Chemical mapping of a 177-nucleotide RNA with 2A3 and DMS. The reactions ran in a buffer of 150 mM KOAc, 10 mM MgCl2 and 150 mM bicine (pH 8.5), at 24 C. Reactivities are rounded to 0.1 and cut off at 0 and 3. Source: RMDB library RFM100, as collected in RNAgym. Reactivities are given for positions 27 through 126.
RNA sequence: GGGAACGACUCGAGUAGAGUCGAAAAUUGGGGCCGCCUCUGCUGGGUUUUCGCCCAGUUGAACAGUCGAAGACCGUGGAAGCCGUAAUGGCACGAAGCGAUCGAAUGGCUGGAUAACGUAAGAGAGUGUACUUUAAGCCUUCGGGCUUAAAGUACAAAAAGAAACAACAACAACAAC
Reactivity to 2A3 in 0.01 (KOAc 150mM, MgCl2 10mM, bicine 150mM(pH8.5), 24C), signal-to-noise 3, nucleotides 027 to 126: u060u070g020g010g000g030c050c000g030c000c000u040c000u010g020c000u030g000g000g070u060u170u080u120c040g010c010c000c010a020g000u000u020g010a060a060c020a000g020u040c020g040a040a030g020a040c030c010g000u010g000g030a060a000g020c020c010g030u290a150a280u300g000g030c030a020c140g000a020a010g020c020g010a000u010c000g010a100a050u080g000g020c000u000g010g010a030u070a070a040c060g050u050a160a040g070a000g000a030g070
Reactivity to DMS in 0.01 (KOAc 150mM, MgCl2 10mM, bicine 150mM(pH8.5), 24C), signal-to-noise 2, nucleotides 027 to 126: u080u010g000g040g000g020c070c080g000c070c010u010c010u000g000c010u030g000g000g030u040u000u010u010c130g030c060c000c000a070g000u020u000g010a100a130c020a020g010u000c000g010a150a300g000a030c010c000g010u000g000g000a190a050g020c000c000g050u050a100a110u050g000g000c010a000c120g000a300a180g000c020g010a040u000c000g000a050a290u060g010g050c000u000g000g000a100u040a090a030c080g010u010a080a050g000a170g010a140g010

For 2A3, 1,464 sequencing reads were counted.